Record summary: Chemical mapping of a 207-nucleotide RNA with 2A3 and DMS. For 2A3, 396 sequencing reads were counted. Conditions: 150 mM KOAc, 10 mM MgCl2 and 150 mM bicine (pH 8.5), 24 C.
RNA sequence: GGGAACGACUCGAGUAGAGUCGAAAAGUAUGUAAAUGUAUUCAUUUCCUCUGCAGUGACACGAUCAAUACUACUAUCGGAGUGAAACAAGGGAUCUAAAGAAGAAGAGAGGCUAGACUAUAUUAGUAACAAGCAAACCUUGUAUGUGUAUCUCCAACAUAAGCUUUCCGUUCGCGGAAAGCUUAUGAAAAGAAACAACAACAACAAC
Reactivity to 2A3 in 0.01 (KOAc 150mM, MgCl2 10mM, bicine 150mM(pH8.5), 24C), signal-to-noise 1, nucleotides 027 to 156: g030u010a020u060g070u140a050a260a130u140g000u010a220u020u220c100a060u000u060u120c000c000u010c070u000g000c050a000g000u070g080a020c030a040c100g080a040u060c070a040a060u180a140c060u030a020c030u050a020u150c030g030g000a000g030u010g070a000a030a030c040a000a000g000g000g050a000u000c030u140a060a120a100g180a140a020g030a010a000g030a070g000a000g000g030c000u000a000g000a010c030u010a000u030a010u280u040a030g010u040a030a110c010a000a030g020c000a000a000a170c040c040u060u030g010u110a080u070g100u000g000u000a080u080c000u000c000c000a040a030
Reactivity to DMS in 0.01 (KOAc 150mM, MgCl2 10mM, bicine 150mM(pH8.5), 24C), signal-to-noise 1, nucleotides 027 to 156: g030u000a060u020g000u000a040a110a110u010g100u000a080u000u010c050a100u000u000u040c030c000u000c070u000g010c000a040g020u020g040a040c070a100c060g020a080u010c030a040a070u020a060c050u000a060c050u000a180u000c060g020g000a120g020u000g010a150a060a010c050a050a050g060g000g010a030u000c060u000a070a020a200g030a110a100g000a070a120g000a130g010a070g010g020c030u010a050g010a120c080u000a050u000a080u030u000a110g020u030a040a070c070a000a070g020c030a040a020a140c080c060u000u000g030u020a080u000g040u000g000u000a130u000c000u000c000c000a100a280